[RMDB]
RNA sequence: GGGAACGACUCGAGUAGAGUCGAAAACCAGCUGCUAGCUGAUUGGCUCCUCUGAGGUGAUGCCCAUUGGGCUGUUUCCCUGCCCUUUCAGACCACGGAGCUGCUCAUUGGGGGACUCUUUUGGCUCUCUCCUAUAACCGUUCGCGGUUAUAGGAGAAAAAGAAACAACAACAACAAC
Reactivity to 2A3 in 0.01 (KOAc 150mM, MgCl2 10mM, bicine 150mM(pH8.5), 24C), signal-to-noise 2, nucleotides 027 to 126: c000c010a010g020c030u140g040c090u120a060g020c020u040g060a110u040u100g060g000c010u000c000c020u060c070u070g030a030g010g090u070g070a110u210g050c010c020c030a080u070u140g000g020g000c010u040g040u030u100u050c010c010c000u020g050c000c010c000u000u080u150c070a060g010a080c020c020a030c110g000g040a060g030c030u030g020c010u020c020a060u070u080g030g050g010g020g020a030c010u010c000u070u090u030u020g060g040c010u030c000
Reactivity to DMS in 0.01 (KOAc 150mM, MgCl2 10mM, bicine 150mM(pH8.5), 24C), signal-to-noise 3, nucleotides 027 to 126: c060c010a130g000c040u010g010c170u010a070g030c020u000g020a070u000u000g020g020c080u000c010c010u010c020u000g000a060g000g020u000g020a070u010g000c010c000c020a170u010u000g000g010g010c010u010g010u010u010u000c000c020c030u000g000c030c030c040u000u010u000c120a120g010a060c100c060a070c230g010g000a050g000c040u000g000c040u000c020a090u000u000g010g030g010g010g000a050c080u010c040u010u010u000u000g010g020c050u010c080
Chemical mapping of a 177-nucleotide RNA with 2A3 and DMS. Values cover nucleotides 27 to 126. The reactions ran in a buffer of 150 mM KOAc, 10 mM MgCl2 and 150 mM bicine (pH 8.5), at 24 C. The 2A3 profile rests on 1,792 reads.